Conditions: 150 mM KOAc, 10 mM MgCl2 and 150 mM bicine (pH 8.5), 24 C. Structure probing data (2A3) for a 207-nucleotide construct.
RNA sequence: GGGAACGACUCGAGUAGAGUCGAAAAGGGGUCGACGUGCCUAGCGGACCCAAGCUUGGAUUUAUGGAGCUGAAGCCUCCACGGCUCCAUUGUCAGCUUGCUAACGCUAGCACGUCGACGGAGGCACCCAAAAUGUACAUCGUUCGCGAUGUACAAAGAUGAGGAGACGGUUCGCCGUCUCCUCAUCAAAAGAAACAACAACAACAAC
Reactivity to 2A3 in 0.01 (KOAc 150mM, MgCl2 10mM, bicine 150mM(pH8.5), 24C), signal-to-noise 1, nucleotides 027 to 156: g060g000g020g010u000c020g000a020c000g010u010g000c000c040u000a000g000c000g000g040a030c040c010c000a010a010g010c010u250u270g210g010a080u150u190u060a020u130g000g010a000g000c000u020g020a160a030g030c010c070u070c040c000a030c000g000g030c000u000c000c020a000u000u000g000u000c030a000g010c010u000u010g000c010u060a120a020c010g000c000u000a000g020c000a000c000g000u000c000g010a000c000g000g000a020g030g000c020a040c020c010c010a040a160a020a000u070g010u010a000c000a000u010c010g020u030u050c220g040c000g090a000u000g030u080a000c010a000a070a000